[RMDB]
RNA sequence: GGGAACGACUCGAGUAGAGUCGAAAACUCGCCGCUGGCUGCAGUGGCAUCCUCUGUCACCCCAUGCUGGGCUCGUGGGUGCUGGUGGCCGUGGUGGUGUAAGCACCUGCUUUGUGACUGCAUCGCCAGCGCGACUAGCAUUCGUGCUAGUCGCGCUAAAAGAAACAACAACAACAAC
Reactivity to 2A3 in 0.01 (KOAc 150mM, MgCl2 10mM, bicine 150mM(pH8.5), 24C), signal-to-noise 2, nucleotides 027 to 126: c010u040c050g000c020c090g000c040u100g060g000c040u080g000c020a000g020u030g040g000c000a030u040c000c050u000c080u020g000u040c040a020c010c000c000c010a090u090g000c040u180g120g080g090c050u090c040g040u050g000g000g020u000g000c030u000g000g080u020g100g010c030c020g080u060g060g070u200g000g000u000g050u070a100a020g000c000a040c040c070u100g100c070u080u090u070g040u000g120a140c000u000g000c000a020u120c030g020c040c050

The record gives the reactivity of an RNA of 177 nucleotides to 2A3. It was measured as part of the RMDB library OK1LIB. High 2A3 reactivity points to a flexible backbone, as in loops and unpaired stretches. For 2A3, 791 sequencing reads were counted.